Chemical mapping of a 207-nucleotide RNA with 2A3 and DMS. For 2A3 the reverse transcriptase was SuperScript II with manganese. DMS (dimethyl sulfate) methylates the pairing face of unpaired adenines and cytosines.

RNA sequence: GGGAACGACUCGAGUAGAGUCGAAAAGAAAGAGAGUUAGACUCGGUUGAUCUCACCCUUCGGGGGGGCUAUAGAGAUCACUGGAAGCACUACCGGACAACCGGAACAUUGCAGCAAUGCAGCCCAAAAAAUCCAAACAUCUUCGGAUGUUUGGAAACUAUUCAUUGAAGUUCGCUUCAAUGAAUAGAAAAGAAACAACAACAACAAC
Reactivity to 2A3 in 0.01 (KOAc 150mM, MgCl2 10mM, bicine 150mM(pH8.5), 24C), signal-to-noise 4, nucleotides 027 to 156: g080a010a110a010g090a000g010a000g030u100u110a060g040a070c020u000c020g010g020u050u160g010a010u000c000u010c000a040c010c000c020u040u180c260g060g000g000g000g000g000g000c050u120a080u080a190g000a000g010a010u000c000a000c010u030g010g070a050a030g020c040a030c070u060a040c020c010g030g020a070c070a200a240c030c000g010g020a050a030c020a020u070u160g010c020a010g030c010a010a080u050g000c010a030g010c010c000c010a050a090a020a020a010a020u000c000c000a000a000a000c000a000u000c000u090u100c200g070g000a000u000g000u000u000u000g000g010a000a010a000
Reactivity to DMS in 0.01 (KOAc 150mM, MgCl2 10mM, bicine 150mM(pH8.5), 24C), signal-to-noise 2, nucleotides 027 to 156: g010a140a050a120g010a150g000a090g010u010u000a080g000a190c020u000c020g000g020u020u000g020a040u000c000u000c020a140c000c010c000u020u010c170g020g020g030g030g000g010g020c040u010a120u000a120g000a020g030a020u000c010a060c020u000g010g020a100a100g030c040a050c040u000a190c030c010g000g010a090c180a150a160c040c000g010g010a070a120c050a080u000u000g000c030a160g040c100a080a100u000g000c020a110g020c020c000c020a000a010a070a070a070a120u000c000c000a000a000a000c000a000u000c000u010u010c300g010g000a020u020g010u000u010u020g010g010a000a020a080